[RMDB]
RNA sequence: GGGAACGACUCGAGUAGAGUCGAAAAGCCGCCGCGAUGCACGCGGCGAGCCGCGCGACGAUCUGCGACGUGCCGCGCUCGAGCGCCGCGCGCAUCGCCUCCGACAGAUCGCACACCUCGGCGCCGAGCCAGUAAAUGGGUUCGCCCAUUUACUGGCAAAAGAAACAACAACAACAAC
Reactivity to DMS in 0.01 (KOAc 150mM, MgCl2 10mM, bicine 150mM(pH8.5), 24C), signal-to-noise 1, nucleotides 027 to 126: g050c030c000g030c110c120g050c000g020a010u000g020c030a020c010g010c020g040g020c000g030a010g030c020c110g010c020g020c000g010a030c020g000a070u000c070u020g020c100g020a070c100g000u000g030c100c020g000c010g000c020u000c070g020a070g010c000g010c010c000g020c000g000c020g000c000a020u000c020g000c010c040u010c020c010g020a080c030a040g010a060u000c040g000c020a090c080a080c070c020u010c050g000g040c050g030c040c020g030a120
Reactivity to 2A3 in 0.01 (KOAc 150mM, MgCl2 10mM, bicine 150mM(pH8.5), 24C), signal-to-noise 1, nucleotides 027 to 126: g070c010c050g070c060c060g020c020g010a000u040g000c000a010c030g030c010g000g000c010g000a020g000c010c020g040c010g010c000g050a070c020g010a180u050c060u300g110c060g130a110c070g040u080g090c090c050g070c000g000c050u040c060g120a140g020c070g000c000c000g010c000g020c000g070c020a030u020c010g000c010c000u010c010c000g090a100c020a060g040a120u110c060g030c020a030c010a010c060c020u050c030g000g000c000g000c040c070g070a020